[RMDB]
RNA sequence: GGGAACGACUCGAGUAGAGUCGAAAAGAGCACUUGAUGAUAAACUACAAACUGAAACGUUGUUGUGGUCUAUUUUUGAACACUUCGAUGUUACCUUGGGAUGGUCGCACUUGCGAGGCAUUUGCCUGCUCAAGCGACGGUUCGCCGUCGCUUGAGCAAAAGAAACAACAACAACAAC
Reactivity to 2A3 in 0.01 (KOAc 150mM, MgCl2 10mM, bicine 150mM(pH8.5), 24C), signal-to-noise 1, nucleotides 027 to 126: g000a000g000c100a210c080u050u010g010a000u060g000a050u180a070a180a010c010u240a050c040a080a140a020c130u300g050a040a100a000c000g110u000u000g000u010u030g000u030g010g000u000c040u180a090u210u140u000u000u120g160a120a000c080a050c130u030u050c200g020a110u000g000u040u000a150c010c000u000u000g050g000g000a080u110g040g040u020c000g010c000a000c060u000u100g000c000g000a070g110g000c000a060u060u060u300g000c030c070u000
This 177-nucleotide RNA was probed chemically with 2A3. The 2A3 profile rests on 285 reads. Source: RMDB library RFM100, as collected in RNAgym. For 2A3 the reverse transcriptase was SuperScript II with manganese.